Structure probing data (DMS and 2A3) for a 207-nucleotide construct.
The RNA was probed in 150 mM KOAc, 10 mM MgCl2 and 150 mM bicine (pH 8.5) at 24 C.
[RMDB]
RNA sequence: GGGAACGACUCGAGUAGAGUCGAAAAGAUAUGGAUCUGCUGGAGUCGAUCUGGGUCGAAGAACAACAUUCGGAAACGAAUGUUGGGAGACCCAUCUCGACGAUGAAAGCAGAUCCUAAGUCAAAGGCCAACAGAGUGUUCGCACUCUGUUGGCCAACGAGAGAUGAAUAUUCGUAUUCAUCUCUCGAAAAGAAACAACAACAACAAC
Reactivity to DMS in 0.01 (KOAc 150mM, MgCl2 10mM, bicine 150mM(pH8.5), 24C), signal-to-noise 1, nucleotides 027 to 156: g030a120u000a240u000g020g000a060u000c000u000g010c000u000g000g000a230g000u000c020g010a040u000c020u020g010g000g060u020c010g000a220a240g010a090a180c000a000a040c000a020u000u000c000g010g000a240a140a300c000g000a010a000u000g000u000u000g000g000g010a300g050a050c030c000c000a000u000c020u000c020g030a100c020g000a100u000g010a190a180a070g000c040a040g000a040u020c000c000u000a000a170g030u000c040a060a080a190g040g000c000c000a040a000c060a000g070a030g150u000g000u000u040c300g000c000a020c030u010c000u000g000u000u000g000g010c000c010a000a000
Reactivity to 2A3 in 0.01 (KOAc 150mM, MgCl2 10mM, bicine 150mM(pH8.5), 24C), signal-to-noise 2, nucleotides 027 to 156: g010a010u050a020u110g000g000a000u020c010u010g000c010u010g010g000a020g010u000c010g010a030u030c040u020g000g010g010u020c040g110a300a040g030a080a030c010a000a000c000a000u010u000c010g050g000a050a030a030c000g000a000a010u000g010u000u000g000g000g000a030g000a000c000c010c000a000u010c010u000c000g020a030c070g210a270u060g020a020a040a000g000c000a010g000a000u010c000c000u000a000a000g000u010c000a070a110a040g000g000c000c000a000a000c000a000g010a000g000u080g050u150u200c280g040c110a010c000u020c010u000g000u010u000g000g000c000c000a000a000
As a SHAPE reagent, 2A3 marks flexible, mostly unpaired nucleotides at the ribose 2'-OH. Source: RMDB library RNAMAK, as collected in RNAgym. DMS adducts were read by reverse transcription with MarathonRT.